This 207-nucleotide RNA was probed chemically with 2A3. Conditions: 150 mM KOAc, 10 mM MgCl2 and 150 mM bicine (pH 8.5), 24 C. For 2A3 the reverse transcriptase was SuperScript II with manganese.

[RMDB]
RNA sequence: GGGAACGACUCGAGUAGAGUCGAAAAGAACUUUGGCCGGCUCGGAAUAGAAUCAGGGGGUGCAAACUGCCCACUGGCAGAAAGGAUUAUAGCAUAUGCGUACCCUAUUGCAAUACAGCCCGGCCAACAUAGACUACUCUAUUCGUAGAGUAGUCAACUAUCUAACCGCGUUCGCGCGGUUAGAUAGAAAAGAAACAACAACAACAAC
Reactivity to 2A3 in 0.01 (KOAc 150mM, MgCl2 10mM, bicine 150mM(pH8.5), 24C), signal-to-noise 2, nucleotides 027 to 156: g010a080a010c050u020u040u040g000g000c020c010g000g030c060u060c080g030g080a020a190u150a130g070a090a060u220c100a020g010g000g000g000g000u040g000c050a040a100a090c010u000g000c000c000c120a090c180u100g000g000c040a000g110a030a030a000g060g000a040u090u140a040u230a260g080c050a120u030a050u230g040c000g000u110a090c030c000c000u020a140u170u150g030c010a050a000u010a030c000a000g010c000c070c060g000g000c000c000a000a000c000a000u040a000g000a010c000u000a000c000u000c000u010a040u080u090c090g070u050a000g000a000g030u010a000g000u000c000a000a000